About this RNA:
Chemical mapping of a 177-nucleotide RNA with DMS and 2A3. The DMS profile rests on 7,777 reads. Values cover nucleotides 27 to 126. The data come from the RNA Mapping Database (RMDB), library OK2TRN. DMS adducts were read by reverse transcription with MarathonRT.
[RMDB]
RNA sequence: GGGAACGACUCGAGUAGAGUCGAAAACGCGGCCGCCGCGCUCGCCGCGCUGCCCGAGGGCGCGGGGCUGCUGAUCGAUCCGCGUCGCGUCACGUACGGGCUGCUGCAGGCGGUGCCGCAGCAGGUAAGUGCGUGACGUCUUCGGACGUCACGCACUAAAAGAAACAACAACAACAAC
Reactivity to DMS in 0.01 (KOAc 150mM, MgCl2 10mM, bicine 150mM(pH8.5), 24C), signal-to-noise 4, nucleotides 027 to 126: c220g010c030g010g020c010c010g010c010c020g020c020g010c010u000c040g010c110c040g020c080g020c080u010g000c030c020c010g010a170g010g000g010c000g020c000g010g000g000g000c010u000g010c030u000g010a110u000c100g000a080u000c010c050g000c110g010u010c040g000c050g000u000c020a040c060g010u000a080c040g000g010g020c010u000g000c000u000g020c000a110g030g010c010g010g000u000g000c020c040g010c010a010g010c020a030g010g010u000a060
Reactivity to 2A3 in 0.01 (KOAc 150mM, MgCl2 10mM, bicine 150mM(pH8.5), 24C), signal-to-noise 4, nucleotides 027 to 126: c040g000c020g030g000c040c040g160c080c000g000c030g050c030u030c060g080c070c010g070c020g050c300u110g010c020c020c000g020a060g020g000g000c000g010c000g010g000g000g000c000u040g000c030u060g040a110u120c050g040a060u030c020c040g020c070g270u040c030g000c010g030u020c020a060c190g040u120a040c020g030g060g010c020u020g000c010u020g010c020a160g010g000c070g150g150u140g000c000c000g000c000a000g040c010a000g030g110u120a100